[RMDB]
RNA sequence: GGGAACGACUCGAGUAGAGUCGAAAAGCAAAUUGUGUGUUGAGAUAACCUCUGAGACUCUCAUGCUGAGGCCAGAAUCAAAAGAAAGGAUUGGGGAAGUCAUGUCACUGCGACAGCUAGGACAUAAACUGCUGACAAGAGACAAACAGAUCAAGCAGAAUAAUGGUGGGUUCGCCCACCAUUAUUCAAAAGAAACAACAACAACAAC
Reactivity to DMS in 0.01 (KOAc 150mM, MgCl2 10mM, bicine 150mM(pH8.5), 24C), signal-to-noise 2, nucleotides 027 to 156: g050c030a130a040a200u000u010g000u020g000u020g000u000u020g030a170g000a090u000a020a140c000c030u000c040u000g000a100g000a080c030u010c020u000c040a040u000g040c090u020g050a090g000g020c000c030a090g010a080a150u000c110a070a060a080a130g020a040a090a050g030g020a300u000u010g000g000g030g000a080a070g030u010c060a040u000g000u000c040a100c070u000g040c030g030a080c090a030g010c010u020a080g020g030a070c050a060u000a060a040a070c010u000g010c020u000g000a070c040a030a140g010a060g000a120c050a030a110a140c080a060g000a040u000c050a070a070g020c070a250
Reactivity to 2A3 in 0.01 (KOAc 150mM, MgCl2 10mM, bicine 150mM(pH8.5), 24C), signal-to-noise 2, nucleotides 027 to 156: g070c040a030a050a210u300u070g010u010g000u000g020u060u100g060a050g030a120u090a060a070c020c010u000c030u080g070a070g050a140c010u000c010u010c090a030u110g020c040u060g040a060g060g020c010c000a030g050a030a050u070c040a010a020a090a020g110a040a050a020g040g020a050u060u090g020g020g040g030a000a040g060u060c030a030u040g000u000c020a010c300u040g060c040g040a100c040a020g020c040u120a020g020g000a000c000a000u060a010a180a000c050u030g010c030u010g000a000c030a030a080g020a010g030a030c000a010a130a000c030a000g040a050u070c030a060a000g030c000a020